[RMDB]
RNA sequence: GGGAACGACUCGAGUAGAGUCGAAAAUGUGGUUCCUUCGGGAACCACACACUACCGAGAAUGAUCCUCGGUAUAUAAAUCAAACCCUUCGAAACAAGGGAACACUCCCUAGCUUCGGCUAGGGAAACGGAUAAUAGAACUUCGGUUCUAUUAUCCGAAAAGAAACAACAACAACAAC
Reactivity to DMS in 0.01 (KOAc 150mM, MgCl2 10mM, bicine 150mM(pH8.5), 24C), signal-to-noise 3, nucleotides 027 to 126: u000g000u000g010g010u000u000c010c000u000u030c170g010g010g020a000a010c000c000a000c000a020c180a120c080u000a010c000c000g010a010g010a110a160u010g010a150u010c160c000u000c020g000g000u000a010u000a030u000a030a040a030u020c180a050a100a120c010c000c010u010u000c070g020a080a100a140c300a020a020g000g000g010a160a090c210a070c160u000c000c000c000u000a000g000c020u000u010c170g020g000c000u000a010g000g000g000a010a000a040
Reactivity to 2A3 in 0.01 (KOAc 150mM, MgCl2 10mM, bicine 150mM(pH8.5), 24C), signal-to-noise 3, nucleotides 027 to 126: u080g000u000g000g020u000u020c020c010u010u030c240g020g010g010a000a000c000c010a000c000a000c000a000c000u030a010c010c020g000a010g020a110a260u240g050a090u110c020c000u000c010g000g000u000a000u000a020u010a040a020a010u060c060a030a040a300c000c000c000u030u040c060g150a110a070a080c030a050a000g000g000g030a050a020c030a020c030u010c000c000c000u000a000g000c000u010u030c290g090g000c000u020a000g000g000g000a000a000a000
Record summary
The record gives the reactivity of an RNA of 177 nucleotides to DMS and 2A3. The DMS profile rests on 2,577 reads. DMS adducts were read by reverse transcription with MarathonRT. The RNA was probed in 150 mM KOAc, 10 mM MgCl2 and 150 mM bicine (pH 8.5) at 24 C. For 2A3, 4,605 sequencing reads were counted. It was measured as part of the RMDB library M2PK50.